[RMDB]
RNA sequence: GGGAACGACUCGAGUAGAGUCGAAAAUUCGAUCCGGACCGGCUCAUCUCGGCAAAGGGCGGCAGUCCUCAGUGCUCUUACUCUUUCCUAUAAAGAGGAGACUGCUGGACUCGCCGCCCAAGCCCGACACGGGGAGAGUUCGCUCUCCCCAAAAGAAACAACAACAACAAC
Reactivity to DMS in 0.01 (KOAc 150mM, MgCl2 10mM, bicine 150mM(pH8.5), 24C), signal-to-noise 5, nucleotides 027 to 129: u070u030c140g000a120u130c050c040g000g030a030c000c060g030g000c030u020c040a000u010c050u020c080g040g000c070a060a070a200g030g020g010c020g000g000c000a040g020u020c010c010u020c020a020g000u070g050c040u010c010u000u000a300c020u130c010u000u020u030c220c170u090a100u110a060a000a010g050a000g000g000a020g000a050c010u000g070c160u000g030g000a020c020u000c050g040c010c000g000c010c000c040a010a050g030c110c030c060g040a090c170a050c220
Reactivity to 2A3 in 0.01 (KOAc 150mM, MgCl2 10mM, bicine 150mM(pH8.5), 24C), signal-to-noise 6, nucleotides 027 to 129: u060u040c030g010a010u000c010c040g010g040a030c010c000g030g010c000u020c010a070u010c030u000c030g010g000c020a070a040a080g000g000g000c020g000g000c010a010g000u000c020c010u010c000a020g000u110g230c020u020c000u070u160a260c010u000c000u010u040u030c030c070u180a160u190a280a040a000g000a010g000g010a000g000a000c000u000g040c060u010g000g000a000c000u020c000g030c010c010g010c000c000c030a020a000g000c000c000c000g020a010c010a020c090